[RMDB]
RNA sequence: GGGAACGACUCGAGUAGAGUCGAAAAUUCUUGUGCACGCUUCAUGUAAGUUGAUCAGCGUGAUUAGCCUAACGGAUUAGUUAGUGGUUAGAAGAAUUGGCUUGUGGAGAUGGAGUGCGAAAAUGACAUCCAUCAAAAUGUUCGCAUUUUGAUGGAUAAAAGAAACAACAACAACAAC
Reactivity to DMS in 0.01 (KOAc 150mM, MgCl2 10mM, bicine 150mM(pH8.5), 24C), signal-to-noise 9, nucleotides 027 to 126: u010u000c020u000u000g020u010g020c000a010c010g010c000u000u010c010a030u010g010u050a040a060g020u000u010g010a020u020c110a090g000c050g030u000g000a110u040u020a050g010c040c000u000a040a030c040g000g000a170u030u020a090g000u000u000a040g020u020g010g010u000u000a040g010a110a080g010a050a040u000u000g000g010c040u000u000g010u010g000g000a050g000a060u020g010g000a120g010u010g010c030g010a050a060a070a090u030g010a120c200
Reactivity to 2A3 in 0.01 (KOAc 150mM, MgCl2 10mM, bicine 150mM(pH8.5), 24C), signal-to-noise 7, nucleotides 027 to 126: u020u000c020u060u130g050u090g070c010a000c010g000c000u010u030c020a060u040g060u220a140a210g080u080u030g030a050u100c070a010g020c030g010u030g020a010u020u060a020g020c000c000u020a010a000c020g160g020a160u070u120a070g030u010u020a010g020u070g140g040u060u050a040g020a100a000g000a070a070u040u020g030g000c030u040u060g020u020g010g020a030g010a050u050g020g050a050g010u050g030c050g060a110a040a000a020u080g010a030c030